[RMDB]
RNA sequence: GGGAACGACUCGAGUAGAGUCGAAAAUGGUGCCGUCCCUGUGCAGGCCGCCGCUGUGUUGGCUGCGUUGGUUGAGUCUUUGGCGCAGAGGCAGACUAAGACGGCUAGUAUAGUUUUGGCUUUGCCGAAUGGUGGACUAGUUCGCUAGUCCACCAUUAAAAGAAACAACAACAACAAC
Reactivity to 2A3 in 0.01 (KOAc 150mM, MgCl2 10mM, bicine 150mM(pH8.5), 24C), signal-to-noise 1, nucleotides 027 to 126: u070g030g000u040g080c040c050g050u040c020c020c000u080g060u070g000c030a030g070g110c020c000g000c030c010g090c120u130g040u030g020u300u160g090g010c000u020g010c010g020u050u040g140g000u020u060g030a060g050u000c030u050u050u120g120g020c090g000c050a000g030a060g060g000c020a010g010a010c010u040a000a060g030a030c020g000g000c030u030a010g030u010a070u050a080g070u060u020u100u130g040g040c020u080u060u050g000c000c010g040
Reactivity to DMS in 0.01 (KOAc 150mM, MgCl2 10mM, bicine 150mM(pH8.5), 24C), signal-to-noise 2, nucleotides 027 to 126: u000g010g010u010g000c020c010g000u000c010c020c020u010g020u010g020c050a080g010g010c000c020g020c050c040g000c090u010g000u010g030u010u000g010g000c010u000g010c040g020u000u010g000g000u000u010g010a100g010u010c010u010u010u000g010g020c100g020c030a030g000a080g000g020c010a110g000a040c020u000a050a100g010a040c000g000g010c030u010a060g010u010a090u000a060g010u000u000u000u000g010g020c010u000u000u000g020c000c030g000
About this RNA
The data come from the RNA Mapping Database (RMDB), library OK2TST. An RNA of 177 nucleotides, treated with 2A3 and DMS and read out base by base. Reactivities are given for positions 27 through 126. The RNA was probed in 150 mM KOAc, 10 mM MgCl2 and 150 mM bicine (pH 8.5) at 24 C. For DMS the reverse transcriptase was MarathonRT.